[RMDB]
RNA sequence: GGGAACGACUCGAGUAGAGUCGAAAAUUACACGCAGGCAUCCUGGAUGCAUUUUCCAUAACGAUGUUGGAAGACUCUGCUGCCAAAUUUUGGGAUGAGUCUUUUUAUGCCGGUUUAUAUGAGAAGUCAACAAUUUUACAGGCUGCAGGUUUGUGUGUCAUAAAACGCCAUUCGUGGCGUUUUAUGAAAAAGAAACAACAACAACAAC
Reactivity to 2A3 in 0.01 (KOAc 150mM, MgCl2 10mM, bicine 150mM(pH8.5), 24C), signal-to-noise 1, nucleotides 027 to 156: u090u060a010c010a020c020g010c040a050g050g040c000a010u020c000c020u000g030g060a040u060g000c060a030u050u110u080u030c080c020a040u090a030a060c030g040a030u060g020u070u110g020g000a000a000g000a020c010u000c020u060g140c050u130g080c030c010a200a270a140u240u300u300u200g010g000g040a050u070g020a010g020u020c000u020u080u000u030u050a030u060g010c020c000g000g000u080u260u080a060u040a010u040g120a140g000a090a000g010u040c010a080a000c010a010a130u020u020u100u300a080c000a050g020g000c010u020g000c010a010g050g050u030u210u140g020u020g020u030g000